[RMDB]
RNA sequence: GGGAACGACUCGAGUAGAGUCGAAAAGAGUACUUCGCGGGUAUGGGCUACUCGGCGUUGACCACGGCCGCGUUGGCCGCCGGCGACGUGCAGACGGCUCAACAUGCCAGCGAGGCGGCCUGGCGGACUGAGCGGCUGGGUUCGCCCAGCCGCUCAGAAAAGAAACAACAACAACAAC
Reactivity to DMS in 0.01 (KOAc 150mM, MgCl2 10mM, bicine 150mM(pH8.5), 24C), signal-to-noise 1, nucleotides 027 to 126: g000a110g000u000a100c100u000u000c070g020c000g000g010g010u000a040u010g000g000g000c000u000a030c220u000c000g010g000c020g000u020u000g000a130c070c040a300c080g000g000c000c010g070c220g030u010u000g000g020c010c000g040c070c070g000g030c020g000a020c040g060u000g000c010a120g030a060c240g010g030c010u000c110a120a120c120a130u000g000c000c010a090g020c040g000a070g010g000c080g000g000c020c000u030g010g000c060g000g000a120